Description:
An RNA of 170 nucleotides, treated with 2A3 and DMS and read out base by base. For 2A3, 4,489 sequencing reads were counted. DMS adducts were read by reverse transcription with MarathonRT. High DMS reactivity at an A or C suggests that its Watson-Crick edge is free. Reactivities are given for positions 27 through 129.
[RMDB]
RNA sequence: GGGAACGACUCGAGUAGAGUCGAAAAGCUCUGAACUUUAAGUUAAUAGGUAUUGGCGGUACACCUUGUAUAAAGGUUGCUGCUAUGCAGUCUAAACUUACAGAUCUUAAAUGCACAUCUGUGGUUCGUAGCGAGCUCUUCGGAGCUCGCAAAAGAAACAACAACAACAAC
Reactivity to 2A3 in 0.01 (KOAc 150mM, MgCl2 10mM, bicine 150mM(pH8.5), 24C), signal-to-noise 4, nucleotides 027 to 129: g030c010u000c030u030g000a000a000c000u000u100u100a050a020g000u000u050a050a060u040a140g020g020u070a090u100u130g020g000c000g000g000u000a000c050a050c150c000u020u030g090u060a180u220a100a050a000g010g000u000u000g020c020u000g020c000u000a010u010g010c000a010g000u020c030u030a150a000a000c000u000u010a000c020a000g020a010u000c010u040u130a080a130a120u270g070c130a030c000a070u000c020u020g070u000g000g010u030u000c030g000u010a000
Reactivity to DMS in 0.01 (KOAc 150mM, MgCl2 10mM, bicine 150mM(pH8.5), 24C), signal-to-noise 2, nucleotides 027 to 129: g000c050u000c060u000g030a010a090c180u000u070u010a020a000g020u000u040a120a130u040a060g000g030u020a060u040u000g020g040c030g010g020u030a030c200a020c000c000u010u010g020u060a120u130a150a040a000g030g020u010u000g000c000u000g070c020u060a000u030g030c030a080g040u010c100u040a000a000a000c040u040u000a110c060a050g000a000u040c060u070u070a060a120a190u090g020c240a170c250a060u010c050u000g030u050g010g070u010u050c070g020u000a030